RNA sequence: GGGAACGACUCGAGUAGAGUCGAAAACUACGUAAAAACGUUCAGUUUAUUAUAACUGCAAAAAAUAAUAACAAUUCUUACGCUUUAGCUGCCUAAUAGUAGCUUGACGUAGAUCCGCCUAGUCUCGUCCAUGGGCUAGAUACGGGUCCUAAAUGAAGUUAUAGAUUGUGUUCGCACAAUCUAUAACAAAAGAAACAACAACAACAAC
Reactivity to 2A3 in 0.01 (KOAc 150mM, MgCl2 10mM, bicine 150mM(pH8.5), 24C), signal-to-noise 5, nucleotides 027 to 156: c010u060a020c010g050u080a030a060a050a130a040c020g020u050u050c010a020g000u010u010u050a210u140u080a120u140a070a030c010u030g010c020a030a050a020a090a050a060u210a110a030u120a110a040c050a050a080u120u060c020u070u060a020c020g060c030u090u050u070a000g000c000u010g010c010c020u190a180a090u160a150g000u000a000g000c000u000u030g020a010c000g010u010a040g000a010u000c000c000g010c010c000u000a010g010u010c030u030c150g140u020c100c020a130u170g000g000g000c000u000a010g000a000u070a070c010g000g000g010u020c010c020u140a130a090a070u170g060a080a030
Reactivity to DMS in 0.01 (KOAc 150mM, MgCl2 10mM, bicine 150mM(pH8.5), 24C), signal-to-noise 2, nucleotides 027 to 156: c010u000a040c020g010u010a020a040a070a070a050c070g020u010u020c080a100g020u000u000u000a040u020u000a100u000a050a090c050u010g030c020a000a000a090a110a130a090u000a080a060u000a070a090c030a090a100u000u000c000u000u000a020c000g000c020u000u000u000a030g030c020u000g020c000c020u000a100a070u000a060g050u000a010g030c020u000u000g030a030c070g050u000a060g000a030u000c010c020g010c000c000u000a000g010u010c000u000c120g050u000c150c150a070u000g030g010g000c000u010a010g000a160u010a000c000g060g020g000u000c000c040u010a050a040a100u000g010a110a120
Overview: Chemical mapping of a 207-nucleotide RNA with 2A3 and DMS. For DMS the reverse transcriptase was MarathonRT. The reactions ran in a buffer of 150 mM KOAc, 10 mM MgCl2 and 150 mM bicine (pH 8.5), at 24 C. Values cover nucleotides 27 to 156. The DMS profile rests on 3,623 reads. It was measured as part of the RMDB library ARCHII.